[RMDB]
Structure probing data (2A3 and DMS) for a 177-nucleotide construct. For 2A3, 1,929 sequencing reads were counted. Source: RMDB library 15KREP, as collected in RNAgym.
RNA sequence: GGGAACGACUCGAGUAGAGUCGAAAAAGUACACUUAGGAUUACUAGAACUCUGUCAACUCAGUACUGCCGGUUCGGUAGUUGUGAGUAUGCACAAGAGGGUGUUUGUAUUACCACAAAUGGCUCGUCAGUAUGGAAAGGUUCGCCUUUCCAUACUGAAAAGAAACAACAACAACAAC
Reactivity to 2A3 in 0.01 (KOAc 150mM, MgCl2 10mM, bicine 150mM(pH8.5), 24C), signal-to-noise 3, nucleotides 027 to 126: a000g020u020a020c030a020c060u080u090a030g020g060a060u100u110a090c010u030a060g080a080a010c010u000c000u050g000u010c000a010a010c010u010c010a020g080u020a010c000u000g000c010c020g260g100u150u260c080g010g010u030a000g010u000u010g130u010g070a000g010u020a280u040g060c080a010c030a120a020g000a010g010g030g010u030g080u020u090u000g010u000a050u040u070a080c010c010a010c040a070a050a060u100g080g000c020u000c040g080u040
Reactivity to DMS in 0.01 (KOAc 150mM, MgCl2 10mM, bicine 150mM(pH8.5), 24C), signal-to-noise 2, nucleotides 027 to 126: a070g020u000a050c030a060c100u000u000a110g000g010a200u010u000a050c030u000a090g010a150a180c010u020c010u000g010u010c030a050a090c010u000c010a050g000u000a030c010u000g000c010c030g000g020u020u000c010g030g040u000a000g000u000u000g000u000g000a030g010u000a070u000g020c160a000c040a040a050g020a030g000g000g020u000g020u000u000u000g010u010a030u000u010a210c030c010a070c170a040a070a050u010g010g020c090u010c100g020u000
For 2A3 the reverse transcriptase was SuperScript II with manganese.